[RMDB]
The data come from the RNA Mapping Database (RMDB), library POS240. Structure probing data (2A3 and DMS) for a 307-nucleotide construct. Reactivities are given for positions 27 through 266.

RNA sequence: GGGAACGACUCGAGUAGAGUCGAAAACAAUGCUUCUUUAUAGUAGUUACUAAAUUGACGCUCUAACACACCGUAAAUACGACGGACUUUUUGUUUUUCACGUAAUUGUAGUGAAUACUCAGAUUGCUUACCACCGCGAGCCUGACCAUGUUGACCAGGUGCUUUGUUAGCUUUUUUAGUUUUGACGUCAAAUGGUUUAACGCCAGAUUUAAGUUGCAGGUCUGUCCCUUCGCGGCGAGAGAGUUUGCAUUUUGGACCAAUAAAAGAGCUCUACGUUCGCGUAGAGCAAAAGAAACAACAACAACAAC
Reactivity to 2A3 in 0.01 (KOAc 150mM, MgCl2 10mM, bicine 150mM(pH8.5), 24C), signal-to-noise 2, nucleotides 027 to 266: c020a000a070u060g010c010u060u060c020u040u270u140a300u100a130g060u000a030g060u070u120a080c020u060a000a150a170u010u010g070a050c000g000c000u010c030u090a100a030c090a020c000a070c070c000g120u090a120a080a090u180a150c140g040a020c000g060g050a030c060u220u150u040u140u150g070u110u100u020u090u040c040a020c010g130u120a150a140u220u200g140u120a170g000u010g020a010a010u050a010c050u060c000a020g010a090u000u050g000c010u050u010a000c000c030a030c010c030g010c060g030a080g100c000c050u040g010a020c000c010a150u090g080u130u160g070a070c000c000a040g040g100u020g030c030u140u030u080g090u030u030a040g070c050u240u180u040u000u000u030a110g050u090u040u070u240g010a050c030g030u010c050a020a040a200u070g030g000u040u100u120a070a000c010g020c030c030a020g040a070u090u100u150a110a010g100u120u070g140c060a020g040g040u000c000u020g060u090c120c000c000u020u080c000g000c010g000g000c010g020a030g010a000g000a020g030u020u160u150g020c010a040u050u040u040u090g030g070a060c040c050a050a050u290a230a110a010a000g300a010
Reactivity to DMS in 0.01 (KOAc 150mM, MgCl2 10mM, bicine 150mM(pH8.5), 24C), signal-to-noise 2, nucleotides 027 to 266: c060a130a070u010g000c030u020u000c010u000u000u000a100u010a080g000u000a140g000u020u000a040c000u010a000a050a060u000u020g020a060c090g000c260u070c050u040a040a110c090a080c270a130c030c030g000u010a060a070a110u000a090c200g000a030c060g000g000a150c160u020u000u030u030u010g030u000u000u000u010u000c030a070c010g000u010a050a070u050u010g030u020a100g020u010g000a040a020u010a050c050u000c060a030g010a020u000u010g010c020u000u010a040c120c030a090c060c110g010c010g000a070g010c160c040u010g030a030c050c010a060u020g050u000u000g000a060c020c040a050g020g050u000g000c120u030u010u000g020u030u000a110g010c050u000u010u010u030u040u030a040g000u000u000u030u010g000a070c040g000u000c050a020a040a080u000g000g020u000u010u010a030a060c140g010c060c020a050g000a100u000u020u020a080a140g000u000u000g000c060a100g010g020u000c050u010g010u020c010c070c090u000u010c050g020c050g050g000c080g010a050g020a100g010a130g030u000u020u000g010c020a070u000u010u020u000g000g000a110c070c040a040a030u000a010a030a060a090g020a220